Notes:
An RNA of 207 nucleotides, treated with 2A3 and DMS and read out base by base. For 2A3 the reverse transcriptase was SuperScript II with manganese.
RNA sequence: GGGAACGACUCGAGUAGAGUCGAAAACGGGUACGGUCACAACGUGAAGGAUGUUCCAAUGGGCAAUCCGCAGCCAAGCCCCUACGUGUAGUGUCUGUAAUACUACAGACAUUUCAUAUGGGGAAGGUUCAGAGACUAAAUGGGUGUGGGUGCGUUAGUAUAUCAUGUACUUCGGUACAUGAUAUACAAAAGAAACAACAACAACAAC
Reactivity to 2A3 in 0.01 (KOAc 150mM, MgCl2 10mM, bicine 150mM(pH8.5), 24C), signal-to-noise 3, nucleotides 027 to 156: c040g010g000g040u080a020c030g020g040u050c050a020c040a160a100c110g050u070g060a070a020g020g020a040u050g040u090u120c030c040a070a110u170g030g000g000c010a030a110u030c030c020g010c030a010g010c000c000a040a060g020c010c000c000c000u040a030c060g010u010g020u050a010g000u000g000u000c000u000g010u010a080a090u080a300c130u010a010c010a000g000a000c000a000u010u020u030c000a000u000a070u170g000g000g000g010a030a020g020g000u060u070c040a040g050a020g020a120c040u110a030a080a130u110g010g010g030u080g010u060g010g000g010u020g010c020g030u020u030a030
Reactivity to DMS in 0.01 (KOAc 150mM, MgCl2 10mM, bicine 150mM(pH8.5), 24C), signal-to-noise 3, nucleotides 027 to 156: c060g010g010g020u000a040c030g000g030u000c070a100c050a080a100c060g030u030g000a090a080g010g000a090u000g020u000u000c000c030a110a150u000g020g000g010c030a090a110u000c030c020g040c050a090g000c020c010a040a160g010c140c000c000c000u000a020c030g040u000g010u000a010g050u000g010u000c000u000g000u000a050a180u000a140c210u000a040c010a010g010a020c000a010u000u000u000c020a050u000a060u000g000g010g050g030a090a080g000g010u000u010c060a110g000a130g010a150c040u010a050a060a100u000g000g000g020u000g010u000g000g020g010u000g010c050g010u010u000a140